Background
This 177-nucleotide RNA was probed chemically with 2A3 and DMS. DMS adducts were read by reverse transcription with MarathonRT. The reactions ran in a buffer of 150 mM KOAc, 10 mM MgCl2 and 150 mM bicine (pH 8.5), at 24 C. For 2A3 the reverse transcriptase was SuperScript II with manganese. It was measured as part of the RMDB library TTRDES.
RNA sequence: GGGAACGACUCGAGUAGAGUCGAAAAGAUAUGGAUCGUCAUGAGGUGAUGACCUAUGUCGGAAACGACAUAGCAAGCCUACCAUGCGAUCCUAAGUCAAAGAAUGACUCCUUCGGGAGUCAUUCAAGACUGGUGCAAUGUUCGCAUUGCACCAGUCAAAAGAAACAACAACAACAAC
Reactivity to 2A3 in 0.01 (KOAc 150mM, MgCl2 10mM, bicine 150mM(pH8.5), 24C), signal-to-noise 1, nucleotides 027 to 126: g000a010u040a010u290g010g030a010u010c010g300u190c050a000u010g020a060g070g010u100g120a300u150g020a020c000c010u000a010u000g000u000c000g070g040a020a040a030c000g000a000c020a000u010a000g060c030a230a060g030c000c000u060a190c120c000a010u030g010c010g010a020u000c000c000u020a090a000g010u000c060a230a000a090g000a000a020u040g010a000c000u070c010c000u030u110c150g140g030g000a010g020u030c000a000u000u000c000a010a000
Reactivity to DMS in 0.01 (KOAc 150mM, MgCl2 10mM, bicine 150mM(pH8.5), 24C), signal-to-noise 1, nucleotides 027 to 126: g000a020u010a270u000g010g000a010u000c010g000u000c010a000u000g020a140g000g030u000g030a020u000g000a080c300c000u010a000u000g020u000c000g010g000a100a060a170c000g000a080c000a000u010a010g000c100a170a110g030c060c010u000a080c290c040a060u000g000c050g000a000u000c000c000u000a000a090g010u010c000a090a210a230g020a000a000u000g000a020c000u000c000c000u010u000c300g000g030g000a000g010u000c000a000u000u000c000a090a150